[RMDB]
RNA sequence: GGGAACGACUCGAGUAGAGUCGAAAAGAUAUGGACAUGGAACUACGCAGCUACUUCGCAUCGAUCUCUGAUGCAAUCGGAAACGAUUGCAUCAGAGGGAGCGAAGGUCUGCGCCAUGUCCUAAGUCCGAUAAAUGUGCGUUCGCGCACAUUUAUCGAAAAGAAACAACAACAACAAC
Reactivity to DMS in 0.01 (KOAc 150mM, MgCl2 10mM, bicine 150mM(pH8.5), 24C), signal-to-noise 2, nucleotides 027 to 126: g000a070u030a290u000g020g000a020c000a000u000g000g010a160a050c210u020a300c010g010c000a010g000c120u000a230c000u000u000c000g050c010a300u000c230g000a020u000c000u010c000u000g020a000u000g000c000a000a000u000c000g000g000a120a110a160c000g000a010u000u000g000c000a000u000c010a000g000a000g000g040g020a010g030c000g000a000a000g010g000u010c000u010g020c000g000c010c010a010u000g000u000c000c000u000a000a080g040u020c060
Reactivity to 2A3 in 0.01 (KOAc 150mM, MgCl2 10mM, bicine 150mM(pH8.5), 24C), signal-to-noise 2, nucleotides 027 to 126: g040a100u110a080u170g010g000a000c010a020u030g030g050a130a090c180u250a050c300g000c010a030g010c040u300a300c010u240u010c010g050c040a300u300c040g010a080u020c000u080c000u030g000a010u010g030c020a000a000u020c010g020g030a080a060a050c020g000a000u030u000g020c000a000u000c010a010g000a000g000g020g000a020g010c010g010a000a000g020g010u000c000u010g000c000g020c000c010a000u000g000u000c000c020u000a000a000g000u000c050